Chemical mapping of a 207-nucleotide RNA with DMS and 2A3. For 2A3 the reverse transcriptase was SuperScript II with manganese. 2A3 is a SHAPE reagent: it acylates the 2'-hydroxyl of flexible nucleotides of all four kinds. DMS adducts were read by reverse transcription with MarathonRT. The RNA was probed in 150 mM KOAc, 10 mM MgCl2 and 150 mM bicine (pH 8.5) at 24 C. For 2A3, 3,312 sequencing reads were counted.
RNA sequence: GGGAACGACUCGAGUAGAGUCGAAAAUCAAGACCAGCUUGGGCAACGUGGUGAAACCCCAUCUCUACAAAAAAUACAAAACUUAGCUGGGUGUGGUGGCACAUUCCUGUAGUCCCAGCUACUUGAGGGGCUAAGGCAGGAGGAUCACUUGAGCCCAAUUAUUAGCAUCAUUCGUGAUGCUAAUAAUAAAAGAAACAACAACAACAAC
Reactivity to DMS in 0.01 (KOAc 150mM, MgCl2 10mM, bicine 150mM(pH8.5), 24C), signal-to-noise 2, nucleotides 027 to 156: u000c050a030a090g010a090c000c010a050g000c020u010u000g010g010g010c010a050a070c060g020u010g010g000u020g000a070a060a110c020c020c000c010a060u000c040u010c040u000a200c040a010a040a070a060a070a060u000a130c030a040a030a050a050c130u000u000a020g020c030u000g000g040g030u000g020u000g020g020u010g010g000c030a070c040a130u000u000c020c010u000g030u000a040g030u000c000c000c010a140g020c080u000a010c090u010u000g010a090g000g010g010g030c010u000a030a070g020g020c050a050g000g010a090g020g000a100u000c030a060c030u010u000g030a110g000c020c010c030a060
Reactivity to 2A3 in 0.01 (KOAc 150mM, MgCl2 10mM, bicine 150mM(pH8.5), 24C), signal-to-noise 4, nucleotides 027 to 156: u080c040a040a000g090a090c010c020a010g010c010u060u050g070g020g000c040a070a050c080g020u070g020g040u080g040a110a070a050c000c010c010c020a050u040c050u000c020u050a070c100a050a140a060a020a040a030u190a080c060a030a120a110a060c080u080u100a030g000c040u040g000g060g000u040g030u040g010g020u020g030g020c050a020c040a110u080u050c000c000u040g040u040a000g000u030c000c000c010a020g060c060u080a100c030u090u150g020a060g010g020g000g020c020u030a040a030g140g010c010a010g010g030a010g020g030a090u060c010a020c050u010u060g030a010g000c000c000c000a000